The record gives the reactivity of an RNA of 170 nucleotides to DMS and 2A3. For 2A3, 4,970 sequencing reads were counted. The DMS profile rests on 10,055 reads. 2A3 adducts were read by reverse transcription with SuperScript II with manganese. The reactions ran in a buffer of 150 mM KOAc, 10 mM MgCl2 and 150 mM bicine (pH 8.5), at 24 C.
[RMDB]
RNA sequence: GGGAACGACUCGAGUAGAGUCGAAAAAGCGGGCCUCCCGAUCCGAGGGGCCCGGUGGCCUGAUCUGGAGGGCACUCCGGGCCGUAGGGAAGAAAAGCACCCAGAGGGAGGAAGCCACACAGGGGUUAGACUGCCAUCUUCGGAUGGCAGAAAAGAAACAACAACAACAAC
Reactivity to DMS in 0.01 (KOAc 150mM, MgCl2 10mM, bicine 150mM(pH8.5), 24C), signal-to-noise 3, nucleotides 027 to 129: a110g040c090g000g000g020c000c000u000c010c030c040g040a140u050c020c010g000a240g000g000g000g000c000c000c020g000g000u010g000g040c060c010u020g020a240u040c200u090g040g040a260g020g010g020c070a070c020u010c000c000g000g000g000c030c010g030u040a140g000g000g000a060a090g030a050a050a040a120g070c090a120c000c020c020a090g010a300g000g000g000a030g030g000a020a010g020c050c040a100c120a100c140a000g010g000g010g000u000u040a060g020a230
Reactivity to 2A3 in 0.01 (KOAc 150mM, MgCl2 10mM, bicine 150mM(pH8.5), 24C), signal-to-noise 3, nucleotides 027 to 129: a000g110c060g030g010g010c000c000u020c000c000c000g010a060u080c020c010g020a080g060g060g010g000c000c010c000g020g000u020g060g010c010c000u050g060a160u100c070u170g060g100a060g080g040g000c040a150c100u090c020c010g000g000g000c030c000g040u010a010g000g020g000a040a000g080a000a090a000a000g050c060a060c000c000c020a040g040a040g070g030g000a000g000g000a030a000g000c000c020a030c030a000c020a040g000g090g000g000u050u060a040g030a090